Source information
Chemical mapping of a 177-nucleotide RNA with 2A3 and DMS. It was measured as part of the RMDB library OK1LIB. The reactions ran in a buffer of 150 mM KOAc, 10 mM MgCl2 and 150 mM bicine (pH 8.5), at 24 C. For 2A3, 4,105 sequencing reads were counted.
RNA sequence: GGGAACGACUCGAGUAGAGUCGAAAAGACGAGUGGGCGCCCCUCAGAGGGAAGUAUCGGAAUGGGACGAACCGCUCCUUUGUGGGAACACGGGCCACCCUUAAGACAAUACCUUGCAAUAAAGGUCUAUCCCUCGUGAAUUCGUUCACGAGGGAUAAAAAGAAACAACAACAACAAC
Reactivity to 2A3 in 0.01 (KOAc 150mM, MgCl2 10mM, bicine 150mM(pH8.5), 24C), signal-to-noise 5, nucleotides 027 to 126: g080a010c070g030a020g010u050g000g020g050c000g000c010c000c020c000u050c050a060g010a060g000g020g040a050a070g070u060a170u170c030g010g070a150a110u140g110g050g060a030c030g000a080a050c030c030g000c000u040c000c010u040u050u040g010u070g000g020g030a070a030c060a020c130g040g090g040c010c000a030c020c000c000u060u090a090a010g060a030c030a020a050u070a110c000c000u000u000g000c020a020a040u070a250a300a000g020g000u010c020
Reactivity to DMS in 0.01 (KOAc 150mM, MgCl2 10mM, bicine 150mM(pH8.5), 24C), signal-to-noise 3, nucleotides 027 to 126: g040a070c230g020a060g020u020g000g000g000c040g030c090c030c010c000u000c070a060g000a010g010g000g050a200a040g000u010a050u030c060g000g010a160a180u020g010g000g040a110c040g000a030a090c020c060g000c120u000c000c020u000u020u010g040u020g000g000g020a110a090c120a130c010g000g000g040c010c030a060c000c000c000u000u010a090a060g000a080c230a100a090u020a060c000c000u010u000g010c170a090a110u030a080a040a030g010g000u000c220